[RMDB]
RNA sequence: GGGAACGACUCGAGUAGAGUCGAAAAGAUAUGGAGCGGUGUCUUUUGACGUACAUCAGGCUUUAGUCCCUAUCUCGGAAACGAGAUAGGGACUAAAGCUGUACGAUAAGACAACGCUCCUAAGUCAUCAAGAUGGUAACUUCGGUUACCAUCUUGAAAAAGAAACAACAACAACAAC
Reactivity to DMS in 0.01 (KOAc 150mM, MgCl2 10mM, bicine 150mM(pH8.5), 24C), signal-to-noise 2, nucleotides 027 to 126: g010a100u010a300u010g000g000a020g020c020g000g010u010g010u000c010u020u000u000u010g040a230c130g030u000a010c020a200u020c300a190g030g000c000u010u000u020a020g000u000c010c010c000u000a000u000c000u000c010g000g000a080a110a220c020g020a000g000a000u000a000g000g010g000a000c000u010a000a000a000g000c000u000g010u000a010c000g000a170u000a010a000g000a020c000a000a000c000g000c000u000c000c000u000a000a040g010u000c030a260

This 177-nucleotide RNA was probed chemically with DMS.
The reactions ran in a buffer of 150 mM KOAc, 10 mM MgCl2 and 150 mM bicine (pH 8.5), at 24 C.
For DMS the reverse transcriptase was MarathonRT.